RNA sequence: GGGAACGACUCGAGUAGAGUCGAAAACUGGGAUACCAACUGGGGGAGAUAUAGGCAUUUUCCCCACGAAAAAUCACCAGCACUUCUUCGUUUUGCUGCACGUCCAGCCAAAGCGGAUUUGCUCGCGUAAACAUUGGAUAUUCGUAUCCAAUGUUUAAAAAGAAACAACAACAACAAC
Reactivity to 2A3 in 0.01 (KOAc 150mM, MgCl2 10mM, bicine 150mM(pH8.5), 24C), signal-to-noise 7, nucleotides 027 to 126: c010u010g000g010g010a010u050a100c020c030a030a020c050u010g010g020g010g060g000a010g010a010u100a020u070a180g260g050c040a000u000u000u010u000c000c000c010c010a000c010g020a020a030a000a010a000u070c060a080c200c000a000g020c040a030c030u070u030c000u090u080c010g050u010u010u060u070g000c010u010g000c060a050c250g040u030c060c010a030g020c060c050a030a030a010g010c010g020g030a040u040u020u060g020c030u030c060g080c020g070
Reactivity to DMS in 0.01 (KOAc 150mM, MgCl2 10mM, bicine 150mM(pH8.5), 24C), signal-to-noise 9, nucleotides 027 to 126: c020u010g000g000g000a040u000a050c080c060a100a180c300u000g010g000g000g010g000a020g010a020u000a110u010a110g010g020c160a080u000u000u000u000c000c000c000c000a000c040g000a010a070a090a060a030u000c020a120c010c010a010g010c090a140c100u000u000c040u000u000c050g010u000u000u000u000g010c020u000g000c060a090c150g000u010c100c010a040g010c090c110a020a040a070g010c010g000g010a040u000u000u000g010c020u000c140g020c160g010
Structure probing data (2A3 and DMS) for a 177-nucleotide construct. For DMS, 25,446 sequencing reads were counted. 2A3 adducts were read by reverse transcription with SuperScript II with manganese. For 2A3, 17,290 sequencing reads were counted.